Structure probing data (DMS and 2A3) for a 177-nucleotide construct.
DMS adducts were read by reverse transcription with MarathonRT.
2A3 adducts were read by reverse transcription with SuperScript II with manganese.
The reactions ran in a buffer of 150 mM KOAc, 10 mM MgCl2 and 150 mM bicine (pH 8.5), at 24 C.
[RMDB]
RNA sequence: GGGAACGACUCGAGUAGAGUCGAAAAGAUAUGGACGUGGUACGGGAGCUGGUAUCGGAAACGAUACUCAGCUUUGAUCGUAGCACGUCCUAAGUCAAACCCAUUCGAUGUUCGCAUCGAAUGGGAACUGUGCCAUUCUGUUCGCAGAAUGGCACAGAAAAGAAACAACAACAACAAC
Reactivity to DMS in 0.01 (KOAc 150mM, MgCl2 10mM, bicine 150mM(pH8.5), 24C), signal-to-noise 1, nucleotides 027 to 126: g000a040u000a290u040g000g010a000c000g070u010g000g000u000a000c020g020g040g010a020g020c000u020g010g030u000a010u000c010g080g000a060a060a130c000g010a020u000a010c010u070c010a000g010c020u010u000u010g000a120u000c000g020u000a000g010c010a030c000g020u000c000c010u010a000a030g000u000c030a190a120a240c010c000c000a000u000u010c020g000a030u000g030u010u010c300g000c000a010u000c000g020a010a010u000g020g010g000a010a000
Reactivity to 2A3 in 0.01 (KOAc 150mM, MgCl2 10mM, bicine 150mM(pH8.5), 24C), signal-to-noise 1, nucleotides 027 to 126: g030a040u050a040u150g000g000a000c000g000u010g040g300u000a000c010g060g200g090a030g000c010u010g010g010u010a000u010c020g050g000a090a060a000c030g000a000u000a000c110u160c210a000g070c070u070u030u110g040a050u030c010g020u000a030g210c000a000c000g010u000c000c000u070a020a010g000u000c040a000a060a110c000c000c000a000u010u000c000g000a000u000g060u070u140c300g000c180a000u010c010g000a020a010u010g000g010g000a000a040